Chemical mapping of a 177-nucleotide RNA with 2A3 and DMS.
RNA sequence: GGGAACGACUCGAGUAGAGUCGAAAAGCUACCGAACGAUUCCGCCGGCGUGCGGAGGCCGGCGAACUCGUCGGCACCGUAGUCCUGCUUUCGGUUGGCCUGUGCGGCGCGAACGGCGCGGCCGAUCGCUACGGUUUUAGUUCGCUAAAACCGUAGCAAAAGAAACAACAACAACAAC
Reactivity to 2A3 in 0.01 (KOAc 150mM, MgCl2 10mM, bicine 150mM(pH8.5), 24C), signal-to-noise 1, nucleotides 027 to 126: g030c000u030a030c000c010g060a070a030c020g040a090u130u050c080c020g010c000c020g000g030c040g060u190g020c060g010g050a040g010g050c010c000g000g000c000g010a040a050c030u010c020g000u000c020g020g040c030a020c020c030g040u030a020g050u070c000c020u040g050c050u100u160u080c020g040g000u020u040g040g010c010c020u090g040u100g030c090g020g020c070g020c020g110a110a030c050g080g030c030g010c000g030g020c000c030g030a030u080c070
Reactivity to DMS in 0.01 (KOAc 150mM, MgCl2 10mM, bicine 150mM(pH8.5), 24C), signal-to-noise 2, nucleotides 027 to 126: g000c050u000a080c020c020g020a090a060c060g000a100u010u000c040c020g010c010c020g020g000c070g050u010g010c080g010g000a100g020g020c000c000g000g000c010g000a030a030c130u010c000g020u000c000g010g040c030a030c050c020g010u000a160g000u000c000c030u000g000c120u010u000u000c040g010g000u000u010g000g000c020c020u030g050u000g020c000g010g010c060g020c080g000a120a080c070g010g010c040g030c040g010g020c010c010g000a030u000c110

Source information:
For DMS, 2,615 sequencing reads were counted. The RNA was probed in 150 mM KOAc, 10 mM MgCl2 and 150 mM bicine (pH 8.5) at 24 C. It was measured as part of the RMDB library OK2TST.